[RMDB]
RNA sequence: GGGAACGACUCGAGUAGAGUCGAAAAAGUAUUGUAGCAGGUAACAAGUACGGAAUAUAUACUAAGGUACUGGACAACUGUGGGGAAUGGAGAGAAAGUGACGCGUCUCACAAACUCGUGAAGAUCGCACAGCGGACGUAUUCGUACGUCCGCUGUGAAAAGAAACAACAACAACAAC
Reactivity to DMS in 0.01 (KOAc 150mM, MgCl2 10mM, bicine 150mM(pH8.5), 24C), signal-to-noise 2, nucleotides 027 to 126: a060g010u030a090u030u000g000u000a120g000c010a040g000g010u010a100a180c100a000a020g000u000a040c020g030g020a210a100u050a100u080a190u040a080c220u020a110a180g000g000u000a000c000u000g000g000a050c050a050a020c010u000g020u030g000g020g020g000a000a060u000g000g020a090g010a030g000a000a050a030g020u000g010a090c180g000c250g080u010c040u000c020a040c020a030a070a110c130u000c110g000u030g000a060a080g030a080u000c040g020
Reactivity to 2A3 in 0.01 (KOAc 150mM, MgCl2 10mM, bicine 150mM(pH8.5), 24C), signal-to-noise 1, nucleotides 027 to 126: a000g260u190a240u080u050g020u020a010g020c020a000g000g000u030a090a080c030a100a000g040u030a030c000g060g150a110a000u180a010u160a000u000a260c030u100a060a020g140g040u000a000c030u060g000g000a030c010a020a000c080u080g030u170g050g000g000g060a040a080u050g070g010a090g020a000g000a160a100a000g030u000g010a070c020g000c070g070u000c010u000c020a000c060a000a240a100c020u050c020g000u000g000a010a010g030a000u130c000g040

Chemical mapping of a 177-nucleotide RNA with DMS and 2A3. The DMS profile rests on 2,645 reads. The reactions ran in a buffer of 150 mM KOAc, 10 mM MgCl2 and 150 mM bicine (pH 8.5), at 24 C. For DMS the reverse transcriptase was MarathonRT.